[RMDB]
The record gives the reactivity of an RNA of 177 nucleotides to DMS and 2A3.
RNA sequence: GGGAACGACUCGAGUAGAGUCGAAAAAACGAUACGGCCGGCGCGGCGGGGACCGCUGGGCCAGGCUGCUGGAGGGCCCCCGGGCGAGGUGCGAACGGCCAGUCAGUCUCGGGGAGGGACUGCUCGCCUAAGUGAAAAACUUCGGUUUUUCACUUAGAAAAGAAACAACAACAACAAC
Reactivity to DMS in 0.01 (KOAc 150mM, MgCl2 10mM, bicine 150mM(pH8.5), 24C), signal-to-noise 4, nucleotides 027 to 126: a060a070c040g000a180u010a100c060g010g010c010c010g000g030c020g000c020g010g020c030g030g000g010g000a140c060c020g010c030u000g010g000g020c030c010a040g000g010c070u010g010c080u000g010g000a170g010g000g010c030c000c010c070c040g000g010g020c030g000a050g000g000u000g020c050g010a090a120c140g010g010c010c040a100g030u010c030a030g010u000c020u000c010g010g020g000g010a210g000g000g010a040c040u000g010c030u000c100g010c120
Reactivity to 2A3 in 0.01 (KOAc 150mM, MgCl2 10mM, bicine 150mM(pH8.5), 24C), signal-to-noise 2, nucleotides 027 to 126: a000a000c100g000a070u130a070c070g000g000c020c010g050g090c070g020c010g090g030c050g010g020g020g070a120c050c030g000c090u050g000g110g000c010c000a010g030g020c040u080g020c010u030g020g050a080g010g040g010c000c000c000c000c020g000g000g000c020g010a060g010g090u140g070c020g030a200a060c010g100g000c000c000a020g020u050c010a010g000u000c010u000c010g060g020g080g070a100g020g010g030a030c030u030g000c000u040c020g050c010
The reactions ran in a buffer of 150 mM KOAc, 10 mM MgCl2 and 150 mM bicine (pH 8.5), at 24 C. The data come from the RNA Mapping Database (RMDB), library OK2TST.